[RMDB]
RNA sequence: GGGAACGACUCGAGUAGAGUCGAAAAGCGCUGGCUAUCUAUGGCCCGACUCGGUGUCAAAAGUAAAGUAGCUGCCUUUGUGAUGGUCAGCUUAUAAAUAACAACUUUUUCCAUGUUAUAAAGGCAGGGAUAAUAUUUUUUUCGAAAAAUAUUAUCCAAAAGAAACAACAACAACAAC
Reactivity to DMS in 0.01 (KOAc 150mM, MgCl2 10mM, bicine 150mM(pH8.5), 24C), signal-to-noise 3, nucleotides 027 to 126: g000c160g000c000u010g000g000c010u000a000u000c010u000a220u010g000g000c000c010c010g010a190c130u030c060g020g000u080g010u010c020a020a060a090a090g000u030a070a100a090g000u020a140g000c000u000g000c000c000u000u000u000g010u040g020a010u010g000g010u010c000a010g000c000u000u000a040u030a030a070a020u020a040a020c070a030a060c150u010u000u000u020u010c000c020a110u010g010u030u010a010u030a040a060a020g030g000c000a000g010
Reactivity to 2A3 in 0.01 (KOAc 150mM, MgCl2 10mM, bicine 150mM(pH8.5), 24C), signal-to-noise 4, nucleotides 027 to 126: g060c020g010c010u000g000g000c000u000a000u010c000u020a070u090g040g000c030c000c000g200a240c070u080c120g020g000u110g000u010c000a010a060a010a040g060u080a080a080a010g070u030a080g040c020u010g000c000c010u000u020u020g070u040g010a010u000g010g000u010c000a000g000c000u000u010a040u030a020a110a000u070a020a020c030a010a050c030u130u100u000u020u000c020c000a020u050g030u060u060a090u030a030a020a030g000g010c000a000g030